[RMDB]
RNA sequence: GGGAACGACUCGAGUAGAGUCGAAAACUCGAAUCUUUCGAGAUUCGAGACUCUCGAAGUGUCAAUAAGAUCGAAAAGAUCGCCGAGCAUAAAAUUGACACAAUGCUGCUUGAUUCGUCAAGCAGAAUUGAACAAAAACUUUCGAGUUUUUGUUCAAAAAAGAAACAACAACAACAAC
Reactivity to 2A3 in 0.01 (KOAc 150mM, MgCl2 10mM, bicine 150mM(pH8.5), 24C), signal-to-noise 2, nucleotides 027 to 126: c000u000c000g000a020a000u020c000u040u100u160c200g070a010g000a010u000u010c000g000a000g020a010c030u030c010u010c040g090a300a070g000u000g000u000c000a000a000u070a100a030g000a020u000c010g040a120a190a100a140g020a020u020c020g020c040c060g090a090g090c050a050u190a180a250a100a010u070u020g000a000c000a000c010a010a050u100g010c000u000g020c000u010u010g010a020u020u050c210g040u020c100a010a000g000c000a000g000a000a080
Reactivity to DMS in 0.01 (KOAc 150mM, MgCl2 10mM, bicine 150mM(pH8.5), 24C), signal-to-noise 3, nucleotides 027 to 126: c000u000c000g010a010a020u000c000u000u000u010c140g000a020g020a010u000u000c000g010a010g010a070c220u000c020u010c010g010a100a120g010u010g010u000c000a010a010u010a070a100g010a020u000c010g000a120a060a110a240g000a010u010c020g020c220c090g020a090g000c170a100u010a040a050a100a060u000u000g000a020c000a010c010a120a080u020g000c000u010g010c000u000u010g000a020u000u020c180g030u000c000a000a010g000c000a000g000a040a070
Structure probing data (2A3 and DMS) for a 177-nucleotide construct. The reactions ran in a buffer of 150 mM KOAc, 10 mM MgCl2 and 150 mM bicine (pH 8.5), at 24 C. The 2A3 profile rests on 1,902 reads. The DMS profile rests on 2,284 reads. The data come from the RNA Mapping Database (RMDB), library M2PK50.